[RMDB]
RNA sequence: GGGAACGACUCGAGUAGAGUCGAAAAUACGCUAAGUUCGCUUAGCGUAAAAUAUAUGGGACUUUAUAAAACCUGAUAGCCGUAGAAGAUCAUGUAUCGGCAAAAUCACCAUCUUCGGAUGGUGAAACCGAGUAACUUGAUUCGUCAAGUUACUCGGAAAAGAAACAACAACAACAAC
Reactivity to DMS in 0.01 (KOAc 150mM, MgCl2 10mM, bicine 150mM(pH8.5), 24C), signal-to-noise 2, nucleotides 027 to 126: u000a020c000g000c000u000a000a010g010u000u040c250g010c000u000u000a020g020c010g010u000a000a010a060a080u010a120u000a050u010g010g030g020a080c060u010u000u020a090u000a100a080a090a200c010c000u010g010a120u010a070g000c000c000g000u000a180g000a050a030g000a100u000c030a050u010g010u000a050u010c000g000g000c000a010a030a060a090u000c000a000c000c010a000u010c000u000u000c140g020g000a040u000g000g000u000g010a000a020a080
Reactivity to 2A3 in 0.01 (KOAc 150mM, MgCl2 10mM, bicine 150mM(pH8.5), 24C), signal-to-noise 2, nucleotides 027 to 126: u050a010c010g010c010u020a000a010g030u010u070c100g020c100u020u000a010g000c000g000u000a000a000a020a000u090a000u020a090u060g030g010g030a010c010u060u140u050a160u150a120a130a030a040c000c000u010g030a090u060a050g000c020c010g000u000a010g020a130a010g030a120u080c030a030u140g040u170a060u050c000g000g010c000a030a020a040a020u010c010a000c000c000a000u010c010u000u020c180g080g000a000u000g000g000u000g010a010a000a000